[RMDB]
RNA sequence: GGGAACGACUCGAGUAGAGUCGAAAAUAGAAGAAGAGGCUAGGUGGUAUUCCGGUGAGGGAUACUUGGUAAUAUGUAACGCUAAUUGCAUAAGAUUGUAGGACGGAAUUUACAGUCUUGGUUUUUAAAAACUUCUCGUAGUUCGCUACGAGAAGAACCACAGGGAAAACUUCGGUUUUCCCUGUGGAAAAGAAACAACAACAACAAC
Reactivity to 2A3 in 0.01 (KOAc 150mM, MgCl2 10mM, bicine 150mM(pH8.5), 24C), signal-to-noise 1, nucleotides 027 to 156: u130a010g020a070a000g010a010a000g020a020g060g020c100u080a010g060g000u010g020g000u040a070u010u090c030c020g050g100u270g060a020g000g010g010a030u030a010c010u030u050g000g010u050a080a080u070a090u150g050u070a070a000c020g020c100u020a070a050u060u060g010c000a050u010a100a010g010a010u030u060g020u030a010g000g070a020c110g010g030a050a040u070u050u030a030c020a000g010u030c000u020u010g030g000u030u040u080u110u150a120a090a010a050a040c000u000u000c000u000c000g000u000a000g020u050u020c170g000c070u000a000c010g000a000g000a000a000g000a000a000

Record summary: This 207-nucleotide RNA was probed chemically with 2A3. For 2A3, 941 sequencing reads were counted.